RNA sequence: GGGAACGACUCGAGUAGAGUCGAAAAAUCAAAAGAUGUGACAGGUGAAAUGCCUAUUUCAGUGUCCAUUGAUGGUUCUGCUUACACACCACCUGGCUGCCUGGUGUCGCAGUGGCAGAGUUGAGCAACGUAAAGGAGUGUUCGCACUCCUUUACGUAAAAGAAACAACAACAACAAC
Reactivity to 2A3 in 0.01 (KOAc 150mM, MgCl2 10mM, bicine 150mM(pH8.5), 24C), signal-to-noise 2, nucleotides 027 to 126: a000u050c030a030a040a000a010g020a020u050g060u190g070a010c040a030g130g300u030g020a060a040a020u100g260c070c070u120a040u000u000u010c030a040g010u010g010u000c010c020a000u050u020g020a020u020g070g020u030u000c000u060g020c030u120u220a030c050a000c000a030c030c010a030c000c030u010g010g000c020u030g030c000c000u040g010g020u000g020u040c060g000c030a030g020u050g070g000c000a010g020a030g070u000u080g060a040g000c020a040
Reactivity to DMS in 0.01 (KOAc 150mM, MgCl2 10mM, bicine 150mM(pH8.5), 24C), signal-to-noise 4, nucleotides 027 to 126: a040u000c020a050a030a100a170g010a030u000g010u020g010a020c020a030g000g020u000g000a030a010a020u000g020c300c250u010a080u000u000u000c000a040g010u000g010u000c000c010a030u000u000g000a300u000g010g000u000u000c030u000g010c040u010u000a050c090a060c060a030c050c020a040c070c070u000g010g000c040u000g010c040c060u000g000g020u000g000u000c150g010c070a060g020u010g000g000c010a020g000a080g010u000u000g000a070g020c160a090